Chemical mapping of a 177-nucleotide RNA with 2A3 and DMS. For DMS, 5,436 sequencing reads were counted. It was measured as part of the RMDB library OK1LIB. For DMS the reverse transcriptase was MarathonRT.
RNA sequence: GGGAACGACUCGAGUAGAGUCGAAAAACGGUCUGCGCCGUAUGUAUGCCAAUAAUGAAGACGUGUUCUACUACAUCACCCUGAUGAACGAGAACUACACCCAUCCGGAUAUGCCCGAAGGUGCGGAGCCGUACUGAUAGUUCGCUAUCAGUACGGCAAAAGAAACAACAACAACAAC
Reactivity to 2A3 in 0.01 (KOAc 150mM, MgCl2 10mM, bicine 150mM(pH8.5), 24C), signal-to-noise 9, nucleotides 027 to 126: a000c020g020g050u020c040u070g030c050g010c030c020g040u040a060u070g080u020a060u120g070c040c040a100a070u240a110a080u170g130a100a030g040a050c060g040u050g020u050u020c030u060a130c010u040a020c000a010u020c020a080c040c050c130u140g040a050u020g020a080a030c050g010a000g010a040a010c020u040a020c020a050c020c010c010a030u050c030c020g020g000a040u060a050u230g040c020c000c010g040a060a040g010g010u030g020c050g010g000a030
Reactivity to DMS in 0.01 (KOAc 150mM, MgCl2 10mM, bicine 150mM(pH8.5), 24C), signal-to-noise 4, nucleotides 027 to 126: a060c040g010g010u000c020u010g020c130g030c000c000g010u030a040u040g020u030a060u000g010c060c040a110a050u030a070a070u010g030a090a070g020a110c080g050u010g000u000u000c010u000a030c070u000a220c050a010u000c030a090c060c030c030u050g000a060u010g010a020a170c300g050a090g000a030a020c030u020a060c070a110c060c030c020a050u000c030c070g000g010a100u000a090u020g000c030c010c020g000a160a040g000g020u000g000c000g030g020a080